[RMDB]
RNA sequence: GGGAACGACUCGAGUAGAGUCGAAAAGCUCUUGAUCGCUCCGUUUACAGACAGCGUGGGCAUAUCCCGCGAUAGCUAUCUUGGCCAUCUCCUUAUGCUUUACCGAGAGACCAUAGGAAAUACCCGUGUUAAUGAGACCACAUAUAACGAGAUUACGCAGUCGUACUUUGUUCGCAAAGUACGACUGAAAAGAAACAACAACAACAAC
Reactivity to DMS in 0.01 (KOAc 150mM, MgCl2 10mM, bicine 150mM(pH8.5), 24C), signal-to-noise 1, nucleotides 027 to 156: g000c010u000c010u000u010g020a040u000c000g000c010u000c020c010g060u000u000u000a270c070a080g030a060c040a170g000c010g030u000g010g030g070c080a060u010a060u010c000c000c010g080c080g020a170u000a100g000c030u000a080u000c070u000u000g030g020c030c030a160u020c000u000c030c050u010u000a040u000g050c090u010u000u000a050c080c030g040a070g010a120g060a070c010c010a100u000a030g000g000a040a090a150u020a120c010c020c090g040u000g040u010u010a070a090u010g020a200g000a130c050c030a080c130a140u000a110u010a040a100c030g010a080g000a110u000u000a090c040g000
Reactivity to 2A3 in 0.01 (KOAc 150mM, MgCl2 10mM, bicine 150mM(pH8.5), 24C), signal-to-noise 4, nucleotides 027 to 156: g010c020u010c020u080u120g100a130u060c020g000c020u060c050c050g070u060u110u120a120c110a090g060a040c060a030g030c030g020u090g000g000g000c070a090u060a060u300c010c010c040g000c010g060a130u100a030g000c020u070a030u070c010u010u070g010g000c000c010a050u000c030u030c030c000u090u190a050u110g030c000u080u070u100a100c060c050g040a050g000a010g020a120c000c020a040u040a030g040g010a010a100a040u170a050c000c000c000g040u060g020u070u100a110a090u110g010a010g030a030c070c010a030c020a040u160a010u020a140a020c070g010a000g020a110u040u150a050c100g000
Chemical mapping of a 207-nucleotide RNA with DMS and 2A3. For 2A3 the reverse transcriptase was SuperScript II with manganese. The reactions ran in a buffer of 150 mM KOAc, 10 mM MgCl2 and 150 mM bicine (pH 8.5), at 24 C. Values are in units of 0.01, from 0 to 300, in steps of 10. The data come from the RNA Mapping Database (RMDB), library OK3TST. For 2A3, 1,682 sequencing reads were counted. DMS adducts were read by reverse transcription with MarathonRT.